An RNA of 207 nucleotides, treated with 2A3 and DMS and read out base by base. Values cover nucleotides 27 to 156. The reactions ran in a buffer of 150 mM KOAc, 10 mM MgCl2 and 150 mM bicine (pH 8.5), at 24 C. The DMS profile rests on 2,462 reads.
[RMDB]
RNA sequence: GGGAACGACUCGAGUAGAGUCGAAAAGCGCGCCUCGAGCCGGUGAACUGGUUUCAAUUUCUAAGCUUGUUUGGGGUUGUAUUCGUCGGCUUAAAGUUGAACAGGAGUAAUUCAGUAUGAAACUCCGACUCGUCGAACGGCGAAACAACAAGGUGGACAUACACCAACUUUUCGAAGUUGGUGUAUGAAAAGAAACAACAACAACAAC
Reactivity to 2A3 in 0.01 (KOAc 150mM, MgCl2 10mM, bicine 150mM(pH8.5), 24C), signal-to-noise 2, nucleotides 027 to 156: g030c030g000c000g010c000c000u010c000g000a020g040c010c000g050g030u060g040a070a010c050u060g010g020u060u130u090c040a080a070u030u170u000c070u180a080a150g030c080u080u130g010u060u100u120g040g010g020g030u010u010g030u110a300u020u040c000g010u010c000g000g080c000u040u150a030a070a090g040u030u060g050a070a040c070a080g040g000a010g000u010a040a230u000u020c010a030g070u140a250u150g100a050a050a050c000u000c000c000g000a000c010u030c050g070u020c020g060a090a120c020g000g000c000g010a000a060a000c060a040a000c010a000a050g100g030u110g070g000a010
Reactivity to DMS in 0.01 (KOAc 150mM, MgCl2 10mM, bicine 150mM(pH8.5), 24C), signal-to-noise 1, nucleotides 027 to 156: g010c080g020c020g040c060c000u020c040g000a030g080c000c030g110g040u020g000a110a080c080u000g040g000u000u000u000c020a090a130u000u000u010c010u000a030a120g010c030u000u000g010u000u000u000g030g020g020g050u000u040g030u000a120u000u000c010g000u000c000g030g000c060u000u000a080a060a090g000u000u000g010a110a090c170a210g060g000a130g010u000a060a090u000u000c100a250g000u000a130u020g000a110a090a120c020u000c010c000g000a020c110u000c010g010u000c080g020a110a060c080g020g010c000g000a080a040a110c000a000a020c020a100a080g030g000u000g010g000a300